[RMDB]
RNA sequence: GGGAACGACUCGAGUAGAGUCGAAAAGCCGGCCGGGGAUGUCCACCUCCAGCGGGCCCACCGUGAUGGUUUCCGAGGACGACGUUGCAGUGGAGCCGCGGCGGCGCAGCAGCGCCUUCACCCGUGCGAAUCGUACUCGGUUCGCCGAGUACGAUUCAAAAGAAACAACAACAACAAC
Reactivity to DMS in 0.01 (KOAc 150mM, MgCl2 10mM, bicine 150mM(pH8.5), 24C), signal-to-noise 1, nucleotides 027 to 126: g010c070c040g020g020c030c010g000g010g000g010a060u000g000u000c060c080a120c060c050u010c100c010a100g040c030g010g030g010c070c020c030a090c050c010g000u020g020a090u000g010g010u000u010u010c030c020g020a110g000g000a060c100g020a070c050g000u000u000g030c150a040g010u010g010g000a070g000c010c030g010c050g010g000c050g020g010c060g000c040a060g040c110a050g010c010g020c050c000u000u000c080a150c020c040c030g040u050g010c170

The data come from the RNA Mapping Database (RMDB), library OK2TRN. An RNA of 177 nucleotides, treated with DMS and read out base by base. The DMS profile rests on 1,281 reads. Conditions: 150 mM KOAc, 10 mM MgCl2 and 150 mM bicine (pH 8.5), 24 C.